The record gives the reactivity of an RNA of 177 nucleotides to 2A3 and DMS. The RNA was probed in 150 mM KOAc, 10 mM MgCl2 and 150 mM bicine (pH 8.5) at 24 C. For 2A3, 3,026 sequencing reads were counted. The data come from the RNA Mapping Database (RMDB), libraries RFM100 and RFMREP. 2A3 adducts were read by reverse transcription with SuperScript II with manganese.
RNA sequence: GGGAACGACUCGAGUAGAGUCGAAAAAUACAAACCAUGAAAGUGUGGCCUAUUGAUCCUUUAGUCCUUUAGAAUUUAAAGCUAGAGGUGCCAGAAAAGUUACCACAGGGAUAACUGGCUUGUGGCACAGAAAGACUUCUUUCGAGAAGUCUUUCUGAAAAGAAACAACAACAACAAC
Reactivity to 2A3 in 0.01 (KOAc 150mM, MgCl2 10mM, bicine 150mM(pH8.5), 24C), signal-to-noise 5, nucleotides 027 to 126: a000u180a010c090a040a060a110c020c010a020u110g150a140a140a110g170u190g020u020g100g010c000c030u110a120u070u090g030a060u130c020c000u020u060u060a030g070u170c010c010u030u020u000a030g050a180a090u190u220u110a140a110a000g010c000u000a000g000a000g000g020u030g010c010c000a010g060a020a110a000a000g070u110u110a030c010c010a040c070a070g060g010g090a070u070a110a020c020u010g080g000c000u010u030g040u010g040g000c030a000
Reactivity to DMS in 0.01 (KOAc 150mM, MgCl2 10mM, bicine 150mM(pH8.5), 24C), signal-to-noise 5, nucleotides 027 to 126: a070u030a030c090a090a100a140c050c020a040u010g010a110a130a160g020u020g010u000g000g000c080c090u000a060u010u010g000a120u020c020c000u000u040u030a070g000u030c090c010u000u000u000a010g010a090a080u040u020u020a060a050a090g000c030u000a010g010a020g010g010u000g000c040c050a060g000a040a060a060a060g000u000u000a050c020c020a100c170a080g000g000g010a080u010a040a040c060u010g010g000c150u010u000g000u010g000g000c090a180